This 177-nucleotide RNA was probed chemically with DMS and 2A3. Values cover nucleotides 27 to 126. Source: RMDB library M2PK90, as collected in RNAgym. DMS adducts were read by reverse transcription with MarathonRT. For 2A3 the reverse transcriptase was SuperScript II with manganese. The 2A3 profile rests on 978 reads. High DMS reactivity at an A or C suggests that its Watson-Crick edge is free.
RNA sequence: GGGAACGACUCGAGUAGAGUCGAAAAGAUUAGGCAGAUAACAACUAUUACGCGUCUUGCCACUGUAUUGUAAAGUAAACAACAAGAUAAAAGUUUAAUACACCUACGCGACAAGAUGAAUCAGCAAUCGAAAUUGAACAUUCGUGUUCAAUUUCGAAAAAGAAACAACAACAACAAC
Reactivity to DMS in 0.01 (KOAc 150mM, MgCl2 10mM, bicine 150mM(pH8.5), 24C), signal-to-noise 2, nucleotides 027 to 126: g010a110u010u010a010g000g020c030a070g000a050u030a050a060c080a070a080c070u000a090u000u010a110c140g030c070g020u000c010u000u010g000c020c050a160c050u010g010u000a050u000u000g010u010a120a070a100g010u000a010a050a030c040a090a090c130a160a070g000a150u010a050a030a140a050g000u000u020u000a010a080u000a030c040a050c120c110u000a010c040g000c030g030a050c020a010a010g000a050u000g000a070a030u010c100a050g020c150a060a070
Reactivity to 2A3 in 0.01 (KOAc 150mM, MgCl2 10mM, bicine 150mM(pH8.5), 24C), signal-to-noise 1, nucleotides 027 to 126: g060a020u100u150a030g060g000c040a020g050a100u090a250a000c030a040a050c010u080a080u150u070a050c100g020c030g010u050c020u010u010g070c010c000a000c030u060g030u050a010u180u040g050u080a030a090a230g060u010a080a090a000c030a000a070c030a060a020g010a210u210a100a180a000a000g000u010u010u020a020a030u080a090c010a020c020c040u010a010c000g000c010g020a010c000a050a000g030a050u020g000a020a090u150c060a050g000c030a000a020